[RMDB]
Conditions: 150 mM KOAc, 10 mM MgCl2 and 150 mM bicine (pH 8.5), 24 C.
This 177-nucleotide RNA was probed chemically with DMS.
It was measured as part of the RMDB library TTRDEL.
For DMS, 548 sequencing reads were counted.

RNA sequence: GGGAACGACUCGAGUAGAGUCGAAAAGAUAUGGACGAAGAACGAUCGGUCUAAGACAGGCAGUCGGAAACGACUGCUCGAGACCUGUCGGGAGUCCUAAGUCAAAACCUCUCCUUCGGGAGAGGAAUCUAGUAGGAGCGUUCGCGCUCCUACUAGAAAAAGAAACAACAACAACAAC
Reactivity to DMS in 0.01 (KOAc 150mM, MgCl2 10mM, bicine 150mM(pH8.5), 24C), signal-to-noise 1, nucleotides 027 to 126: g000a010u050a300u000g000g000a030c000g010a120a120g020a130a150c040g020a010u040c300g000g000u000c000u010a150a080g030a250c300a160g000g040c000a000g000u000c000g000g000a160a040a220c030g000a000c000u000g010c000u000c080g010a000g010a000c010c000u000g020u000c000g000g000g000a090g000u000c000c000u000a010a070g000u000c040a080a090a130a090c000c020u000c000u000c000c000u000u000c160g010g000g000a010g000a000g000g030a010a010